RNA sequence: GGGAACGACUCGAGUAGAGUCGAAAAGAUAUGGACGAGCGAAUGUCGAAGAACUAAGUCUGUCGGAAACGACAGAGCUUAGGGAGACAAACUCGUCCUAAGUCAAAGGCAAACUUCGGUUUGCCAACGAAUGCGCUAAGUUCGCUUAGCGCAUUCGAAAAGAAACAACAACAACAAC
Reactivity to 2A3 in 0.01 (KOAc 150mM, MgCl2 10mM, bicine 150mM(pH8.5), 24C), signal-to-noise 2, nucleotides 027 to 126: g010a010u050a060u140g000g020a020c020g010a000g050c140g190a300a240u140g000u070c040g080a300a090g040a100a060c000u010a000a000g030u050c000u000g020u000c010g000g050a010a000a030c000g010a020c010a000g000a030g030c000u000u010a000g020g020g010a150g010a010c000a020a100a050c000u000c000g020u040c000c000u000a020a000g050u010c020a120a060a070g010g020c030a040a010a000c030u110u110c220g060g000u000u010u000g000c070c000a000a020
Reactivity to DMS in 0.01 (KOAc 150mM, MgCl2 10mM, bicine 150mM(pH8.5), 24C), signal-to-noise 2, nucleotides 027 to 126: g010a030u000a300u000g080g010a030c000g010a020g000c030g030a200a210u010g010u000c010g010a160a140g000a140a240c010u000a000a010g020u000c000u000g040u010c020g020g000a110a050a250c000g000a000c000a000g000a050g010c030u000u000a010g010g000g020a140g010a010c000a010a190a100c010u010c000g020u020c010c010u000a040a070g000u000c020a090a130a080g010g010c010a020a000a010c020u000u010c230g060g000u000u000u010g000c000c000a010a080